The record gives the reactivity of an RNA of 170 nucleotides to DMS and 2A3. The reactions ran in a buffer of 150 mM KOAc, 10 mM MgCl2 and 150 mM bicine (pH 8.5), at 24 C. For DMS, 37,294 sequencing reads were counted. Reactivities are given for positions 27 through 129.
[RMDB]
RNA sequence: GGGAACGACUCGAGUAGAGUCGAAAAUGCCUGGGCCUCUUCGCCGGGGGCGCUCCGUCUUCGUUCUUCUUCCUUCUCAACAGUCCGACGAUGUUUCCCAGCCAGGGGUUUUCAUCCUCAAGUUUCUCGGACUACGACUUCGGUCGUAGUAAAAGAAACAACAACAACAAC
Reactivity to DMS in 0.01 (KOAc 150mM, MgCl2 10mM, bicine 150mM(pH8.5), 24C), signal-to-noise 5, nucleotides 027 to 129: u070g010c000c030u010g000g000g000c010c010u020c060u030u020c080g020c120c070g000g000g000g000g000c100g000c050u030c010c050g000u040c000u040u040c070g030u030u020c060u040u000c040u030u020c000c030u000u000c040u040c000a110a100c260a100g030u050c050c000g000a120c070g040a080u000g000u010u010u010c030c000c040a120g040c100c100a160g060g000g040g070u000u040u070u000c110a080u000c020c040u000c090a090a140g040u010u000u000c020u000c090g010g030
Reactivity to 2A3 in 0.01 (KOAc 150mM, MgCl2 10mM, bicine 150mM(pH8.5), 24C), signal-to-noise 8, nucleotides 027 to 129: u110g070c000c000u020g000g040g020c010c010u030c040u150u090c050g050c040c020g010g010g010g000g020c030g030c020u020c010c020g070u020c020u060u050c040g090u030u010c010u030u010c000u030u060c010c000u050u040c030u020c020a060a200c020a060g080u040c010c020g030a040c030g000a050u060g030u020u050u020c010c000c000a010g030c030c030a030g010g020g000g000u040u040u040u070c050a080u040c020c000u050c050a060a060g010u000u020u000c010u010c010g030g040